This 177-nucleotide RNA was probed chemically with 2A3. The 2A3 profile rests on 510 reads. Reactivities are given for positions 27 through 126.

RNA sequence: GGGAACGACUCGAGUAGAGUCGAAAAUGCCUUGACCAGUGCUUGCGCUGGCCCGUAGAGGCGAGGCCGCAGGCCGAGUAACGCGGCAAGUGAACGACAAAUUCAUCGGGAACGAAUUUGAACAACCACGAUAGCGUCCCUUCGGGGACGCUAUCGUAAAAGAAACAACAACAACAAC
Reactivity to 2A3 in 0.01 (KOAc 150mM, MgCl2 10mM, bicine 150mM(pH8.5), 24C), signal-to-noise 1, nucleotides 027 to 126: u140g040c000c000u000u120g100a080c000c000a000g000u000g000c090u070u020g020c030g000c000u040g050g070c000c000c000g290u100a100g100a120g100g020c060g040a160g010g000c000c040g030c020a010g040g020c000c010g000a050g000u200a260a120c100g000c000g060g000c080a020a020g070u100g030a080a110c050g020a000c080a000a000a000u060u000c000a030u040c060g000g020g300a000a000c000g000a010a000u000u000u100g000a060a060c000a040a040c000c000